Chemical mapping of a 177-nucleotide RNA with DMS and 2A3.
Values are in units of 0.01, from 0 to 300, in steps of 10.
RNA sequence: GGGAACGACUCGAGUAGAGUCGAAAAGCUGGAGAGGCAAACAGGAAGGACUGCCCCCUGAGCGCCAGGCUUCGGGCCCGGGAAUCGCCGCCGCCGCCGCCGCAGAGCUGCAGCUCGGGGCCGAGGGCAACACACAUUAUUUCGAUAAUGUGUGUUGAAAAGAAACAACAACAACAAC
Reactivity to DMS in 0.01 (KOAc 150mM, MgCl2 10mM, bicine 150mM(pH8.5), 24C), signal-to-noise 8, nucleotides 027 to 126: g010c050u000g010g010a100g010a120g010g010c040a060a170a160c070a060g010g010a110a110g010g010a130c100u000g000c040c020c030c020c030u000g010a070g010c200g000c050c040a070g010g000c020u000u000c040g000g000g010c010c030c010g000g000g000a070a080u010c120g010c010c060g010c020c040g010c030c060g010c050c050g010c060c070g000c060a080g000a110g020c030u000g010c050a100g000c010u000c020g000g000g000g000c020c020g000a040g010g010g000
Reactivity to 2A3 in 0.01 (KOAc 150mM, MgCl2 10mM, bicine 150mM(pH8.5), 24C), signal-to-noise 4, nucleotides 027 to 126: g020c030u050g030g050a190g020a090g120g050c050a060a090a050c030a040g060g080a120a080g070g040a120c070u140g030c000c000c020c000c030u030g040a020g030c050g030c010c010a030g050g000c000u040u020c010g100g020g030c040c040c040g020g010g010a100a110u130c120g020c040c000g000c000c000g010c010c020g070c050c040g050c070c030g020c030a010g030a030g000c020u040g000c010a010g020c010u000c000g000g010g000g010c000c000g010a020g010g010g000